[RMDB]
RNA sequence: GGGAACGACUCGAGUAGAGUCGAAAAAUCGCAUUAACACAAAUAACUAAAUUUGAGGAGAUAAUGCCUCUACUUAUUCUUGGGUAUCCAAAGAAGGUAUCAUCUGUCUUUCAAAUAGAGGCUAUUGCGCUACUACUUACUUCGGUAAGUAGUAGCGAAAAGAAACAACAACAACAAC
Reactivity to DMS in 0.01 (KOAc 150mM, MgCl2 10mM, bicine 150mM(pH8.5), 24C), signal-to-noise 2, nucleotides 027 to 126: a090u000c070g070c100a050u020u020a030a120c110a110c180a060a040a040u010a020a110c020u000a030a080a020u000u010u010g010a100g000g000a010g000a000u000a030a040u000g010c110c030u010c110u000a050c120u000u000a100u050u020c090u000u030g000g000g030u030a090u060c030c030a040a030a070g030a050a010g000g000u020a010u000c020a020u000c000u040g030u030c020u000u000u000c000a000a030a030u000a050g000a100g000g000c010u000a020u000u000g010
Reactivity to 2A3 in 0.01 (KOAc 150mM, MgCl2 10mM, bicine 150mM(pH8.5), 24C), signal-to-noise 6, nucleotides 027 to 126: a000u120c040g020c060a060u180u170a240a020c080a010c020a130a070a060u130a120a040c090u120a080a090a200u030u030u050g070a090g020g030a020g020a040u060a080a200u110g020c010c030u030c000u010a050c050u140u230a080u030u050c040u040u080g000g010g090u270a130u050c030c000a050a070a060g050a040a020g060g000u000a030u190c040a030u010c050u110g140u010c010u020u110u090c010a020a060a030u070a060g060a000g050g000c020u020a040u040u120g020